Structure probing data (2A3) for a 207-nucleotide construct.
For 2A3, 690 sequencing reads were counted.

RNA sequence: GGGAACGACUCGAGUAGAGUCGAAAAACAAAACAAAGUUGUUACCCUAGCAACGGAGAGACGCCACGCUCUGCACAGUCUAUUUUCGGAGCCUAGCCAGAGACGGGAAAACUGACCAAGGUGAGGAAACUCGAACCUCAAGACGGGGAAAGACAGAUCAUCCUCCGUAUUUCGAUACGGAGGAUGAAAAAGAAACAACAACAACAAC
Reactivity to 2A3 in 0.01 (KOAc 150mM, MgCl2 10mM, bicine 150mM(pH8.5), 24C), signal-to-noise 1, nucleotides 027 to 156: a000c050a010a030a030a020c050a050a180a090g030u000u010g000u030u090a160c010c000c010u030a020g010c030a050a050c030g050g000a050g000a000g020a020c050g000c030c000a060c030g000c010u010c040u040g000c050a030c050a060g050u020c060u060a120u030u160u080u140c100g050g000a000g000c000c010u020a010g090c060c010a050g000a000g030a080c020g020g000g000a000a190a040a030c020u030g030a020c030c030a120a150g020g000u020g000a050g010g000a140a030a070c030u060c060g010a070a090c040c000u020c040a050a020g030a010c100g160g030g000g080a030a020a030g060a000c010a000g100a050